Annotation: Source: RMDB library OK3TST, as collected in RNAgym. This 207-nucleotide RNA was probed chemically with 2A3. 2A3 adducts were read by reverse transcription with SuperScript II with manganese.
RNA sequence: GGGAACGACUCGAGUAGAGUCGAAAACGCAUGCGAAAGCAUGCGGCUAUGCUAAUGCAUAGUGACCGCCUUUUCGCACACAUCGCGGGCUAUCGCCUUGUUAUUGGUGAUAGCGUUUCCUCAUAGACUUGUUAUUGUCUGUGCAGGUCGUGUGCCAGCUCCUGACGUAGUUCGCUACGUCAGGAGCAAAAGAAACAACAACAACAAC
Reactivity to 2A3 in 0.01 (KOAc 150mM, MgCl2 10mM, bicine 150mM(pH8.5), 24C), signal-to-noise 2, nucleotides 027 to 156: c000g000c000a000u000g050c000g030a080a000a010g000c000a010u000g000c000g000g010c000u000a000u000g000c050u240a300a130u300g010c000a000u010a010g010u020g070a060c020c030g080c040c040u060u070u140u230c030g000c000a010c000a010c000a000u130c090g000c030g080g070g010c000u000a000u000c000g040c000c010u050u200g210u240u180a180u200u070g000g000u000g000a000u000a010g000c000g010u000u060u020c000c000u010c000a010u020a020g000a010c030u070u100g090u300u280a220u210u170g010u010c010u000g010u000g030c110a040g000g000u130c060g000u000g000u020g000c000c000a010